[RMDB]
RNA sequence: GGGAACGACUCGAGUAGAGUCGAAAAGGUUGAACGUCUUUGUCUCGCCGCGGAACUGCACCUGGAUCACCGGCUUGUCGUCGCCCUUCGUGAUGACCUUGAAGGGCCAGUGCUUCAUGUCCGACUGACGACUAGGUAAUUUCGAUUACCUAGUCGUAAAAGAAACAACAACAACAAC
Reactivity to DMS in 0.01 (KOAc 150mM, MgCl2 10mM, bicine 150mM(pH8.5), 24C), signal-to-noise 6, nucleotides 027 to 126: g010g010u000u000g010a090a100c110g020u000c020u000u010u000g010u010c020u000c010g010c070c040g000c060g010g010a070a100c100u000g010c060a070c050c040u010g010g010a070u020c060a070c030c010g000g000c050u000u000g010u010c050g010u010c150g000c030c060c060u010u010c090g000u020g010a140u040g020a070c130c090u010u020g010a060a040g010g000g020c000c080a030g010u010g000c020u000u020c070a050u010g000u010c030c020g000a120c050u000g000
Reactivity to 2A3 in 0.01 (KOAc 150mM, MgCl2 10mM, bicine 150mM(pH8.5), 24C), signal-to-noise 7, nucleotides 027 to 126: g160g000u100u130g030a040a020c050g040u030c040u060u050u060g070u020c030u010c050g020c010c010g010c020g030g060a080a050c030u060g000c030a050c050c040u030g050g010a060u050c020a020c070c020g020g000c010u010u060g040u050c020g020u020c020g020c000c020c000u040u040c030g030u040g050a160u140g060a100c010c060u050u150g040a020a040g000g000g000c000c000a030g010u030g010c000u010u060c030a040u090g040u000c010c010g050a070c080u060g020

This 177-nucleotide RNA was probed chemically with DMS and 2A3.
It was measured as part of the RMDB library OK1LIB.
The RNA was probed in 150 mM KOAc, 10 mM MgCl2 and 150 mM bicine (pH 8.5) at 24 C.
The 2A3 profile rests on 9,206 reads.
Reactivities are rounded to 0.1 and cut off at 0 and 3.